[RMDB]
RNA sequence: GGGAACGACUCGAGUAGAGUCGAAAAGAUAUGGAUCUGAAAAGAGAAAUACUAGCGAGCAACAGCAUGAGGAUCGGAAACGAUCCCAUGACAUGCUCGCUAGUAUUUCUCUUGCAGAUCCUAAGUCCAAUAAGUCACGGUUCGCCGUGACUUAUUGAAAAGAAACAACAACAACAAC
Reactivity to DMS in 0.01 (KOAc 150mM, MgCl2 10mM, bicine 150mM(pH8.5), 24C), signal-to-noise 4, nucleotides 027 to 126: g010a100u010a300u010g020g000a000u000c000u000g000a040a070a010a010g010a010g010a020a010a000u000a000c000u000a010g000c010g000a020g010c000a020a110c300a260g000c010a000u010g000a160g020g000a000u000c010g020g000a100a110a200c010g000a000u000c010c000c000a000u010g000a030c080a230u000g000c000u000c000g000c000u010a010g000u000a000u000u000u000c000u000c000u000u000g020c010a020g010a000u000c010c000u000a020a070g000u010c040
The record gives the reactivity of an RNA of 177 nucleotides to DMS. The RNA was probed in 150 mM KOAc, 10 mM MgCl2 and 150 mM bicine (pH 8.5) at 24 C. Reactivities are rounded to 0.1 and cut off at 0 and 3. DMS adducts were read by reverse transcription with MarathonRT.